RNA sequence: GGGAACGACUCGAGUAGAGUCGAAAAGAGAGAGAAAGUUCAUCGAAUCUCGUAAAGAAAGAAAAGGAAAAAGAAAGAAAGAAGGAAGAAAGAAAAUAAAAUAAACGAUGAACAAAGAAGAAAGAAAAUGUAGUGCAAUGUUCGCGUUGUGCUGCAUAAAAGAAACAACAACAACAAC
Reactivity to 2A3 in 0.01 (KOAc 150mM, MgCl2 10mM, bicine 150mM(pH8.5), 24C), signal-to-noise 6, nucleotides 027 to 126: g070a000g020a000g010a000g020a000a180a030g040u020u050c010a000u010c040g060a110a070u020c030u000c030g020u090a070a050a040g090a040a080a000g070a030a060a020a030g090g050a060a070a040a010a030g070a020a070a000g060a030a100a000g050a010a020g060g030a020a020g020a050a100a020g080a010a110a030a010u180a020a060a000a010u150a000a080a030c010g010a000u040g010a000a000c040a020a030a020g050a020a010g050a150a060a020g060a020a120a010
Reactivity to DMS in 0.01 (KOAc 150mM, MgCl2 10mM, bicine 150mM(pH8.5), 24C), signal-to-noise 7, nucleotides 027 to 126: g010a060g010a040g000a100g020a110a080a130g010u010u000c010a020u010c010g020a130a110u010c020u010c020g020u040a050a100a110g010a050a060a030g000a030a040a060a060g000g020a020a030a040a070a060g010a110a050a080g010a070a080a050g020a040a040g010g000a060a050g000a080a050a100g000a080a060a060a100u040a050a060a070a080u030a050a060a130c030g010a020u000g010a020a010c020a070a080a110g000a050a060g010a070a050a070g010a070a050a070